[RMDB]
RNA sequence: GGGAACGACUCGAGUAGAGUCGAAAACGGUUACGCCUUCUUUACCGUUAUCAAGGAAGGUACUCGGCCAUGCUAAGGGAAGCAUUAUUCCUUAGGCGCAUGUCGCCGCAAGCAUGGUGUGAGGGGAAAAAGUAUGCUGGGUUCGCCCAGCAUACAACGAUAUGUUCGCGUUCGCGCGAACAUAUCGAAAAGAAACAACAACAACAAC
Reactivity to DMS in 0.01 (KOAc 150mM, MgCl2 10mM, bicine 150mM(pH8.5), 24C), signal-to-noise 1, nucleotides 027 to 156: c010g020g010u000u000a020c040g010c010c010u000u020c010u000u000u000a030c010c000g000u030u010a060u000c170a020a020g010g030a050a000g000g060u000a050c040u000c010g010g020c000c010a040u000g020c000u010a240a130g010g000g030a010a100g030c250a110u010u010a140u010u000c040c000u000u000a100g040g010c000g020c030a090u000g030u000c010g070c020c000g020c170a050a090g020c010a010u000g000g030u000g010u000g000a070g020g000g000g020a060a090a080a150a100g000u000a020u010g020c000u010g010g020g000u000u010c300g000c000c010c000a010g020c020a000u010a000c000a080a080
Reactivity to 2A3 in 0.01 (KOAc 150mM, MgCl2 10mM, bicine 150mM(pH8.5), 24C), signal-to-noise 4, nucleotides 027 to 156: c010g010g010u010u050a020c070g020c010c000u000u000c000u020u010u060a010c010c000g230u150u090a050u090c070a000a000g020g000a010a000g010g010u060a060c000u010c000g020g010c010c000a000u000g000c010u040a070a080g020g000g010a000a030g050c100a130u100u090a130u270u000c010c000u040u090a060g000g000c000g000c050a220u270g090u300c000g000c010c000g010c030a030a000g000c000a000u010g020g010u050g140u130g020a030g010g010g010g060a020a090a010a010a040g010u010a000u000g010c000u000g040g000g010u020u060c110g080c030c010c020a000g000c000a000u000a010c000a000a000